[RMDB]
RNA sequence: GGGAACGACUCGAGUAGAGUCGAAAAAACUACUUCUUCGGAAGUAGUUAUUGCGUGGGUCUAAUAAGCCCAAGGUGCCAGGUUCGACCCUUGCUGCGCGCAUCACCGACCGAUUCGUCGGUCGGAAAAUGUCUCAAUCUUUCGAGAUUGAGACAUUAAAAGAAACAACAACAACAAC
Reactivity to DMS in 0.01 (KOAc 150mM, MgCl2 10mM, bicine 150mM(pH8.5), 24C), signal-to-noise 5, nucleotides 027 to 126: a020a000c000u000a000c000u000u000c000u000u020c180g020g000a010a010g000u000a000g010u000u000a010u000u010g010c070g010u000g010g000g010u000c010u020a100a070u010a150a200g000c010c000c010a040a060g020g020u000g010c020c060a070g010g010u000u000c080g000a110c050c010c020u010u000g010c070u000g010c090g000c040g000c050a060u000c140a230c000c000g010a010c000c000g000a020u000u010c160g020u000c000g010g000u000c000g010g000a020a020
Reactivity to 2A3 in 0.01 (KOAc 150mM, MgCl2 10mM, bicine 150mM(pH8.5), 24C), signal-to-noise 3, nucleotides 027 to 126: a020a010c000u000a000c000u000u010c000u030u050c270g060g010a000a000g000u000a000g000u010u020a100u070u120g020c030g020u030g010g000g000u000c020u050a070a040u070a180a080g000c000c010c000a010a040g100g020u050g000c000c020a030g020g020u090u110c060g050a080c010c000c000u000u070g010c040u040g030c020g010c010g000c010a050u090c050a020c020c010g000a000c000c000g000a010u050u050c090g050u010c000g100g010u000c010g000g010a020a010